[RMDB]
RNA sequence: GGGAACGACUCGAGUAGAGUCGAAAAGAUAUGGAGGUCAUCAGUAAUGGCACCGAAGAACUCGGAAACGAGGGAGGUGCAUUAUGACCUCCUAAGUCAAAGACAAUGCUGUUCGCAGCAUUGUCAAGAGUACAAACCAGUUCGCUGGUUUGUACUCAAAAGAAACAACAACAACAAC
Reactivity to DMS in 0.01 (KOAc 150mM, MgCl2 10mM, bicine 150mM(pH8.5), 24C), signal-to-noise 3, nucleotides 027 to 126: g000a050u000a300u020g010g000a010g010g010u000c010a080u010c250a190g010u010a040a050u010g000g030c010a000c000c020g000a080a080g000a090a190c000u000c000g000g000a100a060a190c000g000a020g000g000g000a050g030g020u000g000c020a040u000u000a010u000g010a030c000c000u000c000c000u000a000a050g000u000c030a100a110a080g000a000c000a000a010u000g000c000u000g000u000u000c300g020c000a010g000c000a000u000u000g000u000c010a010a050